[RMDB]
RNA sequence: GGGAACGACUCGAGUAGAGUCGAAAAGGGCAAAAGUUGAGAAACUUGAUACCAUCAUAUCCUACAUUUCAACUUUGAGUUUCCAGGUCUUUAAACCAUCAUUGAGGAUUGGGGCAUUGGACGAUUGUCCGCGAUAGUGGUUCGCCACUAUCGCGGAAAAAGAAACAACAACAACAAC
Reactivity to DMS in 0.01 (KOAc 150mM, MgCl2 10mM, bicine 150mM(pH8.5), 24C), signal-to-noise 1, nucleotides 027 to 126: g000g000g010c020a090a100a040a020g010u000u000g030a170g020a080a030a090c210u010u010g010a050u010a050c070c070a110u010c120a150u000a060u000c010c040u010a090c230a100u010u000u000c010a040a030c030u010u000u010g000a090g030u000u040u040c010c020a120g000g000u000c000u020u010u040a040a070a100c020c020a010u010c100a180u010u010g000a080g010g010a070u010u010g000g000g000g000c170a120u010u000g010g010a010c140g000a120u010u010g000
Structure probing data (DMS) for a 177-nucleotide construct. It was measured as part of the RMDB library OK2TST. DMS adducts were read by reverse transcription with MarathonRT. The DMS profile rests on 747 reads. Values cover nucleotides 27 to 126.